[RMDB]
RNA sequence: GGGAACGACUCGAGUAGAGUCGAAAACUCAGCCUCCCAAGUAGCUGGGAUUACAGGCGCCUGCCACCUCUUGUUCUGACUUUCUGCGGGGACUUUACAAAUAGGAAGUGCAGUGGCUUUGCCUGGAGUGGUGCUGGCCCAGCUUCCUGGAGGAGCACAGCAUUAUCAGUUUCGACUGAUAAUGCUGAAAAGAAACAACAACAACAAC
Reactivity to 2A3 in 0.01 (KOAc 150mM, MgCl2 10mM, bicine 150mM(pH8.5), 24C), signal-to-noise 2, nucleotides 027 to 156: c030u060c040a040g040c000c000u020c030c000c000a060a030g010u010a000g000c000u010g000g020g040a070u130u300a050c050a070g030g010c030g080c040c040u090g000c020c010a040c010c020u060c060u070u040g040u030u000c010u030g210a280c040u110u170u100c070u160g040c090g010g030g020g010a030c020u020u140u080a060c100a020a080a030u160a050g040g060a090a050g050u070g170c000a010g020u080g100g000c000u060u080u100g030c010c020u020g000g020a010g020u060g120g020u080g000c100u040g040g000c000c000c000a000g030c020u020u010c000c030u060g020g010a010g000g000a010g040c040a020